[RMDB]
RNA sequence: GGGAACGACUCGAGUAGAGUCGAAAAGAUAUGGAGUACCCGCCCUACAGGGAGCUCAGUCGGAAACGACGAGCGAAGAACUGUAGUAACAAGGUACUCCUAAGUCAAAGUAGGCUUCGGCCUACAAGCAUCUAUUCCUGUUCGCAGGAAUAGAUGCAAAAGAAACAACAACAACAAC
Reactivity to 2A3 in 0.01 (KOAc 150mM, MgCl2 10mM, bicine 150mM(pH8.5), 24C), signal-to-noise 2, nucleotides 027 to 126: g030a000u060a050u160g000g000a000g020u000a020c020c000c040g000c030c020c000u010a010c000a010g000g060g000a000g000c000u000c060a040g010u000c000g000g020a050a050a100c020g000a000c000g020a000g000c010g120a230a040g020a030a010c000u020g020u020a000g020u170a090a050c100a060a080g000g000u000a000c000u010c000c000u030a090a020g010u020c090a170a050a020g010u000a000g020g000c000u060u080c300g160g020c020c000u000a000c000a010a000
Reactivity to DMS in 0.01 (KOAc 150mM, MgCl2 10mM, bicine 150mM(pH8.5), 24C), signal-to-noise 2, nucleotides 027 to 126: g000a050u000a300u010g010g000a000g030u000a010c020c000c050g000c300c300c010u020a030c000a000g030g000g010a080g000c000u000c010a100g060u000c000g010g020a170a130a220c010g020a010c010g020a010g000c010g000a050a060g000a070a170c020u010g000u000a000g000u010a060a080c190a140a020g010g000u000a000c000u010c000c000u000a000a040g010u010c010a080a100a150g000u000a020g000g000c000u000u010c190g050g010c000c010u000a000c000a050a160